[RMDB]
RNA sequence: GGGAACGACUCGAGUAGAGUCGAAAACUCCAUUGCUUCGGCAAUGGAGAAACAGGACGUGAGACCGAAACGGAGGUAGGUCCAACUACCUUCUCACAAUAAAAACGCUUAGGUUCGCCUAAGCGAAUCCUGUACCAUAGUUCGCUAUGGUACAGGAAAAAGAAACAACAACAACAAC
Reactivity to 2A3 in 0.01 (KOAc 150mM, MgCl2 10mM, bicine 150mM(pH8.5), 24C), signal-to-noise 3, nucleotides 027 to 126: c010u000c000c010a000u010u000g010c000u020u060c190g160g000c010a010a010u010g000g000a000g000a000a010a000c040a020g020g070a020c070g020u020g030a040g030a050c030c050g070a150a190a010c190g120g050a000g030g000u000a000g010g030u070c070c000a070a120c010u010a000c000c000u050u000c020u010c010a040c060a060a020u240a060a050a020a020a010c020g030c000u010u010a020g040g020u060u040c250g100c030c000u000a000a000g010c000g000a000a010
Reactivity to DMS in 0.01 (KOAc 150mM, MgCl2 10mM, bicine 150mM(pH8.5), 24C), signal-to-noise 4, nucleotides 027 to 126: c000u000c000c000a000u000u000g000c000u000u010c230g020g020c000a010a000u000g030g000a020g010a030a080a090c150a080g010g010a070c140g020u000g010a030g000a250c100c020g010a060a080a100c170g020g040a020g000g020u000a010g010g040u000c140c200a070a170c020u000a010c000c000u000u000c000u000c050a020c070a160a120u020a030a050a070a060a080c010g020c000u000u000a000g000g010u000u010c270g020c000c000u000a000a010g000c000g000a030a020
Chemical mapping of a 177-nucleotide RNA with 2A3 and DMS.
Values are in units of 0.01, from 0 to 300, in steps of 10.
The 2A3 profile rests on 3,522 reads.
For DMS, 2,872 sequencing reads were counted.